Conditions: 150 mM KOAc, 10 mM MgCl2 and 150 mM bicine (pH 8.5), 24 C. Structure probing data (DMS) for a 177-nucleotide construct. DMS adducts were read by reverse transcription with MarathonRT. High DMS reactivity at an A or C suggests that its Watson-Crick edge is free. Reactivities are rounded to 0.1 and cut off at 0 and 3.

RNA sequence: GGGAACGACUCGAGUAGAGUCGAAAAGAUAUGGACCCAUUACUGACGGUUUCACCGUUGAAAGUCCAGGAAGAUCGGAAACGAUCUUCCUGGACUGGAGGUGAACCCGAUGGGUGGGUCCUAAGUCCAAUGUUCGUGUGUUCGCACACGAACAUUGAAAAGAAACAACAACAACAAC
Reactivity to DMS in 0.01 (KOAc 150mM, MgCl2 10mM, bicine 150mM(pH8.5), 24C), signal-to-noise 1, nucleotides 027 to 126: g000a170u010a300u000g030g010a000c010c000c000a010u000u000a100c010u000g010a300c300g010g010u000u010u000c000a000c010c000g020u000u000g030a150a190a020g010u010c000c000a020g010g010a000a000g000a000u030c050g030g000a150a080a250c000g000a020u000c020u000u000c010c000u000g000g000a000c010u000g000g000a080g050g030u000g000a010a060c010c000c000g040a140u000g040g000g090u010g020g000g000u000c000c000u010a030a090g010u010c030